[RMDB]
RNA sequence: GGGAACGACUCGAGUAGAGUCGAAAAGUAAAUAAAGCGCACCAAUAUGGAGGUGCGCUACCAGCGUGACCUAGGAACACGCAUCCACGCGUCUCCUAAGACGCGAAAGGUAUUCCAAAUAAAAAAACUAUAAAGGAAUGUUCGCAUUCCUUUAUAGAAAAGAAACAACAACAACAAC
Reactivity to DMS in 0.01 (KOAc 150mM, MgCl2 10mM, bicine 150mM(pH8.5), 24C), signal-to-noise 2, nucleotides 027 to 126: g000u010a040a100a040u020a060a120a090g060c030g000c010a030c000c000a130a230u000a160u020g020g010a170g000g040u000g020c000g000c000u000a000c150c080a100g000c000g040u000g000a070c160c080u000a140g000g020a100a120c010a000c020g010c020a070u000c040c080a190c000g010c010g010u000c030u010c250c230u010a120a070g020a000c000g030c000g000a000a030a050g000g000u000a080u000u000c010c020a060a120a080u040a020a030a080a180a100a090a270
Reactivity to 2A3 in 0.01 (KOAc 150mM, MgCl2 10mM, bicine 150mM(pH8.5), 24C), signal-to-noise 2, nucleotides 027 to 126: g020u020a030a050a240u180a090a200a000g000c000g000c000a010c020c000a030a100u280a200u300g090g050a100g030g000u000g010c000g020c010u010a000c010c000a010g000c000g010u020g020a070c010c050u080a090g060g140a060a050c000a000c000g000c050a000u040c000c010a040c000g000c000g000u000c030u050c000c060u130a190a100g010a000c000g000c000g030a080a050a000g000g000u020a050u060u090c010c000a070a070a000u260a200a130a030a000a000a030a040

This 177-nucleotide RNA was probed chemically with DMS and 2A3. For 2A3 the reverse transcriptase was SuperScript II with manganese. DMS adducts were read by reverse transcription with MarathonRT. Values cover nucleotides 27 to 126. The RNA was probed in 150 mM KOAc, 10 mM MgCl2 and 150 mM bicine (pH 8.5) at 24 C. The 2A3 profile rests on 1,482 reads.